[RMDB]
RNA sequence: GGGAACGACUCGAGUAGAGUCGAAAAACGAUCUCACACGUUCACACACGUUCUCUCGUUCGUUCGUGAGAGAUCUCACUCGAACGUACUCGUGAUCGUACGAACACGAUCGAGUGAGUGAGUACACGUGUACGAUCUCGAACGUGUACGAUCACGAAUAUCUACUACCAUUCGUGGUAGUAGAUAUAAAAGAAACAACAACAACAAC
Reactivity to 2A3 in 0.01 (KOAc 150mM, MgCl2 10mM, bicine 150mM(pH8.5), 24C), signal-to-noise 9, nucleotides 027 to 156: a000c070g020a040u010c010u020c020a020c000a000c020g010u030u030c020a020c000a010c000a010c110g020u070u010c030u000c010u020c020g040u140u040c060g040u160u040c050g020u130g020a020g000a010g020a050u030c000u010c010a010c000u010c010g020a050a020c010g020u090a070c060u010c010g010u020g050a140u070c050g020u080a030c050g060a060a020c050a000c120g020a040u010c000g000a000g000u020g010a010g000u050g030a020g030u100a040c060a010c120g070u080g020u100a040c060g050a090u040c060u050c100g000a020a010c000g000u010g000u020a010c050g010a010u000c010a000c030g040a030
Reactivity to DMS in 0.01 (KOAc 150mM, MgCl2 10mM, bicine 150mM(pH8.5), 24C), signal-to-noise 5, nucleotides 027 to 156: a070c070g010a070u010c010u000c040a130c060a060c020g010u000u000c020a160c080a080c090a070c050g010u000u000c020u000c010u010c010g010u000u000c150g020u000u000c070g020u000g020a070g010a110g000a110u000c000u000c000a020c010u000c010g000a040a100c020g010u000a040c040u000c010g020u000g010a100u010c130g020u010a070c040g010a040a070c030a040c010g010a130u000c000g020a060g020u010g010a090g010u000g010a250g020u000a060c060a080c070g010u000g030u010a080c040g000a140u000c060u000c050g010a050a050c000g020u000g000u000a030c020g000a060u000c020a050c030g000a100

Chemical mapping of a 207-nucleotide RNA with 2A3 and DMS. The 2A3 profile rests on 39,640 reads. The reactions ran in a buffer of 150 mM KOAc, 10 mM MgCl2 and 150 mM bicine (pH 8.5), at 24 C.